An RNA of 177 nucleotides, treated with 2A3 and DMS and read out base by base. 2A3 adducts were read by reverse transcription with SuperScript II with manganese. The reactions ran in a buffer of 150 mM KOAc, 10 mM MgCl2 and 150 mM bicine (pH 8.5), at 24 C.
[RMDB]
RNA sequence: GGGAACGACUCGAGUAGAGUCGAAAACGUACAAGGAGAUGAGGAGUGAAUCACCAAAACAAGUGGUUUUGGUUUGUGAAUCACCAAAACAAGUGGUUUUGGUUUGUGAAUCAGUAUGGUUUACCCAAUACACCUUGGACUUCGGUCCAAGGUGUAUAAAAGAAACAACAACAACAAC
Reactivity to 2A3 in 0.01 (KOAc 150mM, MgCl2 10mM, bicine 150mM(pH8.5), 24C), signal-to-noise 3, nucleotides 027 to 126: c000g000u010a020c000a040a120g170g020a060g070a120u210g040a040g040g010a010g070u090g070a030a010u120c020a020c010c000a000a000a000a000c060a030a190g140u070g090g020u100u000u000u000g010g000u000u020u090g050u010g060a010a070u050c000a000c000c000a030a010a000a000c000a080a050g140u150g130g010u120u020u000u010g010g040u040u110u030g110u040g020a030a040u060c000a010g050u080a010u110g040g000u040u020u100a080c000c010c000a000
Reactivity to DMS in 0.01 (KOAc 150mM, MgCl2 10mM, bicine 150mM(pH8.5), 24C), signal-to-noise 3, nucleotides 027 to 126: c030g020u010a020c040a120a130g010g020a090g010a110u020g000a170g010g010a200g020u000g000a070a050u020c090a070c010c000a000a020a010a000c000a140a100g040u010g020g010u010u010u000u000g000g020u000u000u050g030u000g000a140a110u030c120a060c000c010a010a000a010a010c010a100a060g020u010g000g000u000u020u010u000g000g010u000u000u000g000u020g000a180a070u010c010a040g000u000a050u000g010g000u000u000u000a120c000c030c050a100